[RMDB]
RNA sequence: GGGAACGACUCGAGUAGAGUCGAAAACUUAGUUGGAUAUCGGUGGCUUACUAUGAAUGAAAACAUAGAGUCAGAUUGUUUUUCACAAAACUGUCACUGUAUUCCAGGAAAAAUUAAGAGUUCUUGGCUGUGGAUAUGUAAGGUGACAUAUCUAUUCGAGUCUCGGAUAAUUCGUUAUCCGAGACUCAAAAGAAACAACAACAACAAC
Reactivity to 2A3 in 0.01 (KOAc 150mM, MgCl2 10mM, bicine 150mM(pH8.5), 24C), signal-to-noise 1, nucleotides 027 to 156: c020u020u020a040g030u020u130g020g000a060u080a070u240c050g000g000u000g010g000c000u000u080a100c050u080a140u110g050a220a070u050g030a000a070a040a000c000a000u010a020g080a040g140u150c050a050g020a100u040u000g040u000u010u020u080u060c030a000c000a050a000a000a080c050u050g000u060c000a000c000u000g030u040a080u030u070c020c040a030g030g050a000a150a150a060a000u110u080a040a030g010a040g180u040u040c050u140u140g100g000c060u070g040u020g140g040a000u010a000u000g060u060a060a050g150g060u100g060a000c010a000u020a010u060c000u090a120u080u300c160